About this RNA:
Structure probing data (2A3 and DMS) for a 177-nucleotide construct. For DMS, 1,195 sequencing reads were counted. The reactions ran in a buffer of 150 mM KOAc, 10 mM MgCl2 and 150 mM bicine (pH 8.5), at 24 C. For 2A3, 2,820 sequencing reads were counted.
RNA sequence: GGGAACGACUCGAGUAGAGUCGAAAAGAUAUGGACGACCAAGACAUGGAUCAUCGGAAACGAUGACCCAACAGCUUGAGUCGUCCUAAGUCAAACUCCCUACUUCCCUUCGGGGAAGUAGGGAGAACGCUAUAGCUACCUUCGGGUAGCUAUAGCGAAAAGAAACAACAACAACAAC
Reactivity to 2A3 in 0.01 (KOAc 150mM, MgCl2 10mM, bicine 150mM(pH8.5), 24C), signal-to-noise 1, nucleotides 027 to 126: g010a000u060a000u030g000g000a020c000g000a000c030c000a000a010g150a200c150a190u070g000g010a020u010c000a000u000c020g030g000a020a020a010c010g000a000u000g010a000c030c000c000a070a130c060a060g020c000u030u020g040a170g070u020c000g000u030c000c000u000a000a000g010u000c020a010a010a220c010u010c000c000c010u000a010c000u000u000c010c030c000u030u140c300g070g000g000g000a000a000g010u000a010g000g010g000a010g000a000a000
Reactivity to DMS in 0.01 (KOAc 150mM, MgCl2 10mM, bicine 150mM(pH8.5), 24C), signal-to-noise 1, nucleotides 027 to 126: g000a030u000a240u000g000g000a000c000g010a010c000c010a020a030g000a080c140a190u000g040g000a010u000c000a010u000c000g000g010a080a020a180c000g000a010u000g000a000c000c000c000a020a070c300a130g000c000u010u000g010a070g010u000c000g020u000c000c020u000a000a060g000u010c050a120a120a140c000u010c010c000c000u010a000c000u000u000c000c000c000u000u000c190g030g000g000g030a000a000g000u000a000g020g000g000a000g000a030a040